[RMDB]
RNA sequence: GGGAACGACUCGAGUAGAGUCGAAAACGACCAGUACAAGGCCUACCUGCAGGACUUGGUGGAGGGCAUGGAUUUCCAGGGCCCUGGGGAGAGCUGAGCCCUCGCUCCUCAUGGUGUGCCUCCAACCGCAUGAAAAGUACUUCGGUACUUUUCAUGCAAAAGAAACAACAACAACAAC
Reactivity to DMS in 0.01 (KOAc 150mM, MgCl2 10mM, bicine 150mM(pH8.5), 24C), signal-to-noise 1, nucleotides 027 to 126: c130g000a220c060c050a110g010u010a100c140a040a050g010g020c040c020u010a060c080c030u000g010c170a040g010g000a260c110u000u010g040g020u000g000g020a020g000g020g020c050a080u010g000g000a170u000u000u000c010c020a040g000g000g020c020c030c020u010g000g000g060g000a010g000a080g020c040u010g000a130g020c010c030c010u000c000g000c030u000c000c000u040c020a110u020g000g030u000g000u000g040c000c000u000c040c040a090a120c160c120